[RMDB]
RNA sequence: GGGAACGACUCGAGUAGAGUCGAAAAGAUAUGGAGGCACCACAUAAGAGCAACAGCUCGGAAACGAGACAUGCUCUGUGGAAUGCCUCCUAAGUCAAAGCUUCCAACAGUUCGCUGUUGGAAGCAACGCUACCUUAACGUUCGCGUUAAGGUAGCGAAAAGAAACAACAACAACAAC
Reactivity to 2A3 in 0.01 (KOAc 150mM, MgCl2 10mM, bicine 150mM(pH8.5), 24C), signal-to-noise 2, nucleotides 027 to 126: g010a000u050a030u100g000g020a000g010g010c000a010c030c050a010c030a070u270a300a130g000a000g060c020a040a140c050a220g130c010u020c010g000g000a020a030a000c010g000a010g050a040c050a080u130g000c010u000c040u050g000u040g010g000a230a020u040g000c010c010u020c000c000u000a020a000g000u000c020a080a040a020g000c010u000u000c010c000a000a000c020a010g130u180u140c260g000c250u020g000u030u000g020g000a000a010g030c000a000a000
Reactivity to DMS in 0.01 (KOAc 150mM, MgCl2 10mM, bicine 150mM(pH8.5), 24C), signal-to-noise 2, nucleotides 027 to 126: g000a050u010a300u000g000g020a020g000g000c000a020c010c010a130c000a150u060a300a060g010a010g000c000a010a080c300a120g000c000u010c010g010g000a040a040a210c000g000a020g000a060c080a160u000g000c000u000c040u000g000u000g000g000a070a040u010g000c010c000u000c000c000u000a000a110g010u000c030a080a060a080g000c000u020u000c000c000a000a040c010a020g040u000u050c270g030c000u000g000u000u000g000g000a000a000g010c000a000a030

This 177-nucleotide RNA was probed chemically with 2A3 and DMS.
Conditions: 150 mM KOAc, 10 mM MgCl2 and 150 mM bicine (pH 8.5), 24 C.
It was measured as part of the RMDB library TTRDEL.
For DMS, 1,055 sequencing reads were counted.
2A3 adducts were read by reverse transcription with SuperScript II with manganese.